This 207-nucleotide RNA was probed chemically with 2A3.
The RNA was probed in 150 mM KOAc, 10 mM MgCl2 and 150 mM bicine (pH 8.5) at 24 C.
RNA sequence: GGGAACGACUCGAGUAGAGUCGAAAAAUCCUCAGGUUCAUAAGCGUGAUGAUUGGGUGUUCAUGCUCCAUGCAAGACAUGUGCCUCCUUUGAACCUUGUUACGACCUUGGCACAUUACCCAUCUGAAAAAGACGUUCGCGUUCGCGCGAACGUCAAGUCUACGGACAUGUUCGCAUGUCCGUAGACAAAAGAAACAACAACAACAAC
Reactivity to 2A3 in 0.01 (KOAc 150mM, MgCl2 10mM, bicine 150mM(pH8.5), 24C), signal-to-noise 1, nucleotides 027 to 156: a000u020c010c000u030c010a010g000g010u020u010c010a000u010a270a010g020c070g110u080g120a060u060g020a040u140u170g000g000g000u060g030u140u070c040a060u080g020c020u050c150c010a050u150g000c000a040a020g000a060c020a010u020g000u000g000c000c000u000c020c010u000u010u020g020a030a030c020c040u000u020g070u020u070a150c090g030a030c030c130u000u090g000g000c050a000c010a030u000u170a020c000c050c000a000u020c030u120g050a010a240a000a000a000g000a000c000g020u000u000c000g000c000g050u030u110c140g000c000g050c000g170a000a000c000g000u000c000a000a000

For 2A3 the reverse transcriptase was SuperScript II with manganese.